The data come from the RNA Mapping Database (RMDB), library OK2TST. The record gives the reactivity of an RNA of 177 nucleotides to 2A3 and DMS. Reactivities are given for positions 27 through 126. For DMS, 9,314 sequencing reads were counted. DMS (dimethyl sulfate) methylates the pairing face of unpaired adenines and cytosines.
RNA sequence: GGGAACGACUCGAGUAGAGUCGAAAAUCAUUCGGUACGUCACGGAUCAAUGCCUGGCCGAUCAGCGCCAUAUCUCGCGCGGAGCUGUACUGACCAUCAGCAUCCAGACCAUGUACCGUCUGGAAGACAUAAAUGGCGGAUUCGUCCGCCAUUUAUGAAAAGAAACAACAACAACAAC
Reactivity to 2A3 in 0.01 (KOAc 150mM, MgCl2 10mM, bicine 150mM(pH8.5), 24C), signal-to-noise 5, nucleotides 027 to 126: u070c010a010u040u020c000g010g000u030a010c020g030u030c090a020c170g020g000a040u040c070a050a040u090g030c010c020u010g000g030c020c010g060a100u070c030a010g010c020g020c030c020a080u090a110u150c140u080c060g090c010g020c060g040g010a010g000c000u020g030u140a170c030u080g060a130c020c000a040u070c050a000g010c000a020u020c020c010a010g020a030c040c020a050u160g030u040a030c020c000g010u000c000u030g020g030a040a020g040a030
Reactivity to DMS in 0.01 (KOAc 150mM, MgCl2 10mM, bicine 150mM(pH8.5), 24C), signal-to-noise 7, nucleotides 027 to 126: u010c040a060u000u000c030g010g020u000a000c050g010u000c100a140c160g000g000a120u010c090a080a060u000g010c040c060u010g010g020c020c020g000a070u000c030a040g030c040g030c010c030a080u000a070u010c070u000c130g000c110g010c110g010g010a060g010c020u000g000u000a080c050u010g020a030c030c010a070u000c180a090g020c060a090u000c030c050a060g000a070c070c190a070u010g000u000a020c050c060g000u000c010u000g010g000a060a070g010a180